[RMDB]
This 207-nucleotide RNA was probed chemically with 2A3. The data come from the RNA Mapping Database (RMDB), library OK3TST.
RNA sequence: GGGAACGACUCGAGUAGAGUCGAAAAAUAUGCUCGCGGUAAGUGGGUCUUCUGUUCUGCCAAAUGGCAUUGGGUGGGUAAGAGCACUUGCAUACAUUCCACAUAUGUCAUACACAUAAAUGGGUCCUUCAUAUACACCAAGGUAAGAGGGGUAGCACAAACAAUGCUUGUUCGCAAGCAUUGUUUGAAAAGAAACAACAACAACAAC
Reactivity to 2A3 in 0.01 (KOAc 150mM, MgCl2 10mM, bicine 150mM(pH8.5), 24C), signal-to-noise 2, nucleotides 027 to 156: a010u040a010u050g010c020u020c030g090c030g010g030u100a070a040g020u110g070g000g020u020c060u110u060c040u110g050u120u000c030u020g000c010c010a130a300a300u270g000g010c040a080u070u080g070g050g090u210g020g000g010u110a130a020g020a020g010c010a030c120u020u100g020c010a020u060a110c030a100u100u000c030c030a070c000a020u050a040u090g030u040c080a030u080a210c030a010c000a060u060a110a150a060u070g040g010g000u000c050c000u050u110c030a040u100a020u050a080c050a040c030c150a050a050g120g010u040a040a010g020a050g000g050g000g000u030a030g020c020a010

Conditions: 150 mM KOAc, 10 mM MgCl2 and 150 mM bicine (pH 8.5), 24 C.